Notes
The data come from the RNA Mapping Database (RMDB), library RFM100. This 177-nucleotide RNA was probed chemically with 2A3. The reactions ran in a buffer of 150 mM KOAc, 10 mM MgCl2 and 150 mM bicine (pH 8.5), at 24 C. Reactivities are given for positions 27 through 126. 2A3 adducts were read by reverse transcription with SuperScript II with manganese.

RNA sequence: GGGAACGACUCGAGUAGAGUCGAAAAACUGGUCUGCAGCUGUUCUUAUGUAACAGUUGUGGCAUUCCUCUGUGGGAAAGAAACUGUUAACACAGUUAAAUACCUCUUUCUUAGCAAAACAGAAAGUCAGCGUGCCUAGUUUCGACUAGGCACGCUGAAAAGAAACAACAACAACAAC
Reactivity to 2A3 in 0.01 (KOAc 150mM, MgCl2 10mM, bicine 150mM(pH8.5), 24C), signal-to-noise 1, nucleotides 027 to 126: a000c030u150g160g160u030c000u130g000c000a000g000c030u000g000u000u100c030u300u300a270u090g000u080a000a000c000a000g000u000u000g000u000g010g000c000a000u020u030c000c000u040c000u000g000u050g030g010g030a020a020a020g000a020a070a000c000u000g030u060u090a030a030c030a000c000a090g000u000u130a090a090a000u130a080c020c000u020c030u000u000u010c050u040u030a060g100c060a010a000a290a000c000a100g060a030a030a040g140u110